[RMDB]
RNA sequence: GGGAACGACUCGAGUAGAGUCGAAAAGAUAUGGACGUGGCUAGACAUGUCGGUACGUCGGAAACGACGUAUCGACAACAGCUAGCACGUCCUAAGUCAAAUCAAUAGCCCUUCGGGGCUAUUGAAAGUGUCACUUUUAGUUCGCUAAAAGUGACACAAAAGAAACAACAACAACAAC
Reactivity to DMS in 0.01 (KOAc 150mM, MgCl2 10mM, bicine 150mM(pH8.5), 24C), signal-to-noise 1, nucleotides 027 to 126: g020a010u000a030u010g000g000a000c000g050u000g020g000c000u000a000g010a020c140a240u010g020u000c010g030g000u010a000c000g010u000c000g020g000a010a010a020c000g000a000c000g020u010a000u010c000g000a000c000a020a010c250a200g010c000u000a010g000c010a000c000g000u000c000c000u010a000a060g000u000c000a110a130a210u000c010a010a000u000a000g000c010c000c000u000u010c220g000g010g010g000c000u000a000u010u000g020a000a050a100
Reactivity to 2A3 in 0.01 (KOAc 150mM, MgCl2 10mM, bicine 150mM(pH8.5), 24C), signal-to-noise 2, nucleotides 027 to 126: g010a000u020a010u060g010g000a010c010g020u030g250g150c010u000a010g020a060c140a300u300g000u010c000g000g000u010a000c000g000u000c000g000g000a010a000a010c000g000a000c000g000u010a000u000c000g000a000c010a010a000c010a000g020c000u000a010g000c000a000c000g010u000c000c000u000a000a000g000u000c000a000a080a200u030c010a000a000u010a000g010c000c000c000u000u030c230g040g010g030g000c000u000a000u000u010g010a030a030a010